[RMDB]
The record gives the reactivity of an RNA of 177 nucleotides to DMS.
Reactivities are given for positions 27 through 126.
RNA sequence: GGGAACGACUCGAGUAGAGUCGAAAAGAAAAUGGUAGCAACGGUUCCAAAGGAGCCGAAGUUCAAAGCUUAGGCAUCGAUCUAAAAUGCUACCAAAAAGGUAACGAGCUUGGCAAUGAACAAAAAAUACUUGUUCAAGGUUCGCCUUGAACAAGUAAAAAGAAACAACAACAACAAC
Reactivity to DMS in 0.01 (KOAc 150mM, MgCl2 10mM, bicine 150mM(pH8.5), 24C), signal-to-noise 1, nucleotides 027 to 126: g000a070a070a050a120u000g000g020u000a000g000c000a130a300c020g020g000u010u000c000c010a080a210a200g000g000a030g080c020c010g010a010a010g000u000u040c030a090a160a300g000c000u020u000a060g010g000c020a110u030c210g000a030u000c040u000a100a090a090a180u000g000c000u000a000c010c000a000a070a020a100a070g000g010u010a020a010c050g000a150g010c000u000u010g000g000c000a020a120u000g000a000a040c010a010a030a060a120a090a080